[RMDB]
RNA sequence: GGGAACGACUCGAGUAGAGUCGAAAAAAAGAUAUGGAACUCCCUAAGAGCUAUGAAGUAUAAAAGUCUAUGGUCGGAAACGACCAUAGUCGCUAUAUGGAGCUCGAUGGGAGUUCCUAAGUCAAAACUAGAACUAGAUGUUCGCAUCUAGUUCUAGAAAAGAAACAACAACAACAAC
Reactivity to DMS in 0.01 (KOAc 150mM, MgCl2 10mM, bicine 150mM(pH8.5), 24C), signal-to-noise 1, nucleotides 027 to 126: a130a100a050g000a040u000a300u000g000g000a000a010c000u010c000c000c010u020a260a300g000a020g020c000u000a120u030g010a190a180g000u010a050u000a030a050a120a110g000u010c000u010a010u000g040g000u000c000g000g000a090a090a150c020g010a010c000c020a000u010a000g050u000c000g020c300u000a000u000a030u000g000g010a000g000c000u010c000g000a260u010g000g000g000a000g000u000u000c000c000u000a030a050g020u010c010a090a070a090a130
The data come from the RNA Mapping Database (RMDB), library TTRDES. An RNA of 177 nucleotides, treated with DMS and read out base by base. The RNA was probed in 150 mM KOAc, 10 mM MgCl2 and 150 mM bicine (pH 8.5) at 24 C. For DMS, 850 sequencing reads were counted.